[RMDB]
RNA sequence: GGGAACGACUCGAGUAGAGUCGAAAAGGACCACAACCCGUUCUACAGCAUGUCCCUAGGGCUGAUAGAGGCAAAAUUGAUUUAGAUGAGGGACGUGCUCCAGUUGGAGCAGUGACUAUUAUUGAGGAUCCUCUUUUGGCACAGAAGAUACCACAGAGAAUCCAUGGUUAUUCGUAACCAUGGAUUCAAAAGAAACAACAACAACAAC
Reactivity to 2A3 in 0.01 (KOAc 150mM, MgCl2 10mM, bicine 150mM(pH8.5), 24C), signal-to-noise 4, nucleotides 027 to 156: g030g020a040c020c010a050c080a090a070c040c000c030g050u080u000c040u030a060c000a040g010c030a030u040g010u050c020c010c000u070a120g060g060g000c010u010g030a110u090a070g110a020g000g060c060a050a040a080a150u120u160g110a130u100u120u160a100g040a150u110g050a070g010g020g000a000c010g010u010g000c010u000c000c010a170g050u240u200g020g000a010g000c020a000g010u020g130a040c040u060a070u250u040a090u040u180g030a060g050g020a050u020c020c000u050c000u050u050u080u060g040g000c020a020c010a080g030a040a000g030a050u110a120c020c060a020c040a060g120a030
Reactivity to DMS in 0.01 (KOAc 150mM, MgCl2 10mM, bicine 150mM(pH8.5), 24C), signal-to-noise 2, nucleotides 027 to 156: g020g010a070c030c040a290c050a040a070c020c010c000g030u000u000c030u010a120c080a120g040c080a120u000g040u000c000c020c000u010a260g000g000g000c020u000g010a080u000a080g000a100g020g020c110a080a050a050a190u020u010g000a040u000u000u000a100g020a170u020g000a060g000g050g010a130c030g020u000g020c000u000c020c010a170g030u000u000g000g030a080g020c030a080g010u000g010a060c060u000a070u020u000a160u020u000g000a130g020g010a130u000c020c030u000c050u000u000u000u000g040g010c000a150c070a060g030a050a120g000a300u000a080c070c040a080c100a160g000a260

This 207-nucleotide RNA was probed chemically with 2A3 and DMS. The reactions ran in a buffer of 150 mM KOAc, 10 mM MgCl2 and 150 mM bicine (pH 8.5), at 24 C.